[RMDB]
RNA sequence: GGGAACGACUCGAGUAGAGUCGAAAAUGACUGACUAGUUUUGGCCUAAGAGGGCCCCCGUAUGGCAGCGGCCAUGUUGGAUUCAGGCGCCAUCUUGGAUUCAGGCGCCAUUUUAGGUGACCAGGCAUCUGUUAACUACAUUCGUGUAGUUAACAGAAAAAGAAACAACAACAACAAC
Reactivity to DMS in 0.01 (KOAc 150mM, MgCl2 10mM, bicine 150mM(pH8.5), 24C), signal-to-noise 9, nucleotides 027 to 126: u010g010a080c030u000g010a110c100u010a100g010u000u000u010u010g010g010c010c010u000a050a060g010a090g000g010g000c020c020c020c040c080g010u000a040u000g010g010c020a180g020c200g010g010c010c030a020u000g000u020u000g020g000a060u000u000c060a050g010g010c120g010c080c190a060u010c030u000u000g000g000a070u000u000c060a080g000g010c170g020c000c000a030u000u000u000u000a050g010g010u000g010a120c040c020a060g010g000c090a160
Reactivity to 2A3 in 0.01 (KOAc 150mM, MgCl2 10mM, bicine 150mM(pH8.5), 24C), signal-to-noise 3, nucleotides 027 to 126: u060g020a010c030u020g020a040c050u070a070g050u030u030u060u090g040g000c030c000u040a120a040g050a100g030g020g000c010c000c020c010c030g060u050a030u030g050g000c060a100g190c120g260g030c040c000a020u040g040u060u100g040g020a050u070u040c040a030g040g000c030g020c050c010a130u190c020u050u090g060g000a060u100u050c040a050g020g030c050g000c010c010a020u030u010u010u050a000g000g010u020g010a070c000c020a010g030g000c020a050
This 177-nucleotide RNA was probed chemically with DMS and 2A3. 2A3 adducts were read by reverse transcription with SuperScript II with manganese. The RNA was probed in 150 mM KOAc, 10 mM MgCl2 and 150 mM bicine (pH 8.5) at 24 C.